Conditions: 150 mM KOAc, 10 mM MgCl2 and 150 mM bicine (pH 8.5), 24 C.
An RNA of 177 nucleotides, treated with DMS and 2A3 and read out base by base.
For 2A3 the reverse transcriptase was SuperScript II with manganese.
[RMDB]
RNA sequence: GGGAACGACUCGAGUAGAGUCGAAAAAGUCAUUGACAUGUGAGAUCAAUAUACCUGCAUGUUAGUCUUAAGUUCUGAUAGAAAUGACAUGCAAUUAUGCUGCCAAACUUGACUAUCAGGACGUGACGAUCUAAGUUUUUUUCGAAAAACUUAGAUCAAAAGAAACAACAACAACAAC
Reactivity to DMS in 0.01 (KOAc 150mM, MgCl2 10mM, bicine 150mM(pH8.5), 24C), signal-to-noise 9, nucleotides 027 to 126: a070g010u010c080a070u010u000g010a010c020a010u010g020u010g010a050g010a080u010c160a120a080u020a140u030a110c080c020u010g010c020a010u000g010u000u010a050g000u000c040u010u010a080a130g000u000u000c010u000g000a010u000a000g000a120a080a090u000g000a030c020a020u020g020c000a070a130u020u020a080u020g010c010u000g010c030c040a030a070a100c220u010u020g010a220c000u000a010u000c000a000g000g000a010c000g010u010g010a060c090
Reactivity to 2A3 in 0.01 (KOAc 150mM, MgCl2 10mM, bicine 150mM(pH8.5), 24C), signal-to-noise 9, nucleotides 027 to 126: a000g090u060c040a060u040u090g010a000c010a000u020g020u040g170a080g020a060u110c100a230a040u130a030u060a300c020c010u000g000c010a000u010g000u020u020a030g020u000c030u090u100a150a040g000u010u000c000u000g000a000u000a010g040a040a080a030u040g010a020c020a040u180g000c000a010a020u210u080a150u240g020c010u010g000c010c020a080a100a130c080u100u110g050a060c000u000a000u010c000a000g000g000a000c000g020u020g010a020c070